An RNA of 177 nucleotides, treated with DMS and 2A3 and read out base by base. The RNA was probed in 150 mM KOAc, 10 mM MgCl2 and 150 mM bicine (pH 8.5) at 24 C. Source: RMDB libraries RFM100 and RFMREP, as collected in RNAgym. Reactivities are rounded to 0.1 and cut off at 0 and 3. DMS adducts were read by reverse transcription with MarathonRT.

[RMDB]
RNA sequence: GGGAACGACUCGAGUAGAGUCGAAAAUACAAGGUCCUCUACACAAUGACCGUAGCGCGAGCUACCAGUAAGAAGUAGAGGAAGCCGAUGUUCCGUCGUACGUUUUGAAAAACGAACCAGGGAGUGUUUCAUAGGGCUAGUUCGCUAGCCCUAUGAAAAAAGAAACAACAACAACAAC
Reactivity to DMS in 0.01 (KOAc 150mM, MgCl2 10mM, bicine 150mM(pH8.5), 24C), signal-to-noise 5, nucleotides 027 to 126: u030a040c130a080a120g000g010u000c000c010u010c000u010a010c010a060c110a100a220u000g000a070c300c280g020u000a000g010c000g010c300g020a210g000c000u020a000c000c000a030g010u000a030a000g000a150a090g010u000a020g010a010g020g020a030a050g000c000c030g010a130u030g000u000u000c010c020g000u010c160g010u000a090c040g000u020u010u000u030g020a070a060a060a080a030c020g000a090a030c030c090a140g010g000g010a110g000u020g000u000
Reactivity to 2A3 in 0.01 (KOAc 150mM, MgCl2 10mM, bicine 150mM(pH8.5), 24C), signal-to-noise 3, nucleotides 027 to 126: u200a010c030a030a050g060g000u030c000c000u000c000u010a000c030a020c010a000a060u010g000a010c000c010g000u000a000g000c030g010c040g030a030g010c010u000a000c000c000a010g000u000a010a040g020a100a000g010u000a010g000a000g010g020a000a010g020c000c000g010a060u120g050u040u000c010c030g080u020c010g030u040a080c030g010u010u000u070u150g190a160a110a010a000a000c030g030a020a040c050c030a060g050g000g030a060g070u070g100u040